This 177-nucleotide RNA was probed chemically with DMS and 2A3. For DMS, 1,440 sequencing reads were counted. The reactions ran in a buffer of 150 mM KOAc, 10 mM MgCl2 and 150 mM bicine (pH 8.5), at 24 C.
RNA sequence: GGGAACGACUCGAGUAGAGUCGAAAAGAUAUGGAGCGUUAAGCUCGCAUCGAUCUAUACUAGUAGCUGUGUAUAUCGGAAACGAUAUACACCGAAAGUAUAGGGAGCGAGCAACGCUCCUAAGUCACGUUAAACCGAAGUUCGCUUCGGUUUAACGAAAAGAAACAACAACAACAAC
Reactivity to DMS in 0.01 (KOAc 150mM, MgCl2 10mM, bicine 150mM(pH8.5), 24C), signal-to-noise 1, nucleotides 027 to 126: g000a050u000a030u010g000g020a040g020c000g070u000u000a170a160g040c000u000c000g000c010a300u000c200g000a000u020c000u000a000u000a020c000u010a110g010u010a110g000c210u000g030u040g010u000a000u000a000u000c000g020g000a000a000a060c000g060a000u010a000u000a000c000a000c000c040g010a090a090a080g020u000a000u000a020g010g000g000a020g020c010g020a010g020c010a060a000c010g030c000u000c000c010u000a000a040g000u010c020a300
Reactivity to 2A3 in 0.01 (KOAc 150mM, MgCl2 10mM, bicine 150mM(pH8.5), 24C), signal-to-noise 1, nucleotides 027 to 126: g010a000u010a000u040g010g000a010g000c060g000u070u130a300a070g020c000u030c030g040c000a130u300c000g000a000u000c000u000a000u000a020c040u030a100g300u290a070g280c120u010g000u000g000u000a000u010a000u010c020g000g050a000a000a000c000g000a000u000a000u000a030c000a020c000c000g020a090a060a000g000u010a000u000a000g000g000g000a020g000c000g010a000g000c000a000a000c010g040c010u000c000c000u000a000a000g000u010c030a050